[RMDB]
RNA sequence: GGGAACGACUCGAGUAGAGUCGAAAAAGACUUGUAUUCGUACAAGUCUACAGAAAUUUCGCUAGCACACGAUGACACCUAGCGUUCUCAAUAACGAUCGAACAACGUGUCAAUUCGUUGACACGAACAUGAGAAUAAUAUUCGUAUUAUUCUCAUGAAAAGAAACAACAACAACAAC
Reactivity to 2A3 in 0.01 (KOAc 150mM, MgCl2 10mM, bicine 150mM(pH8.5), 24C), signal-to-noise 9, nucleotides 027 to 126: a000g000a000c000u000u000g000u010a020u030u100c210g010u030a000c000a000a000g000u000c000u000a010c010a040g220a040a150a070u030u040u020c010g000c010u000a010g010c080a030c010a010c180g180a150u140g100a050c030a040c100c010u000a000g000c000g000u010u000c010u000c000a030a070u200a090a050c120g070a090u110c060g070a070a040c040a040a050c050g000u000g000u000c000a000a010u050u050c190g060u020u010g000a000c000a000c010g000a010a020
Reactivity to DMS in 0.01 (KOAc 150mM, MgCl2 10mM, bicine 150mM(pH8.5), 24C), signal-to-noise 9, nucleotides 027 to 126: a020g010a020c000u000u000g010u000a010u000u010c170g020u000a010c000a010a010g010u000c000u000a080c210a130g000a090a080a150u000u000u000c010g010c010u000a010g000c120a110c160a080c080g010a060u000g010a120c120a080c200c010u000a010g010c010g010u000u000c000u000c010a110a060u020a050a070c180g000a060u000c050g010a120a090c220a070a170c010g010u000g000u000c000a020a030u000u010c150g010u000u000g000a010c000a010c000g000a050a110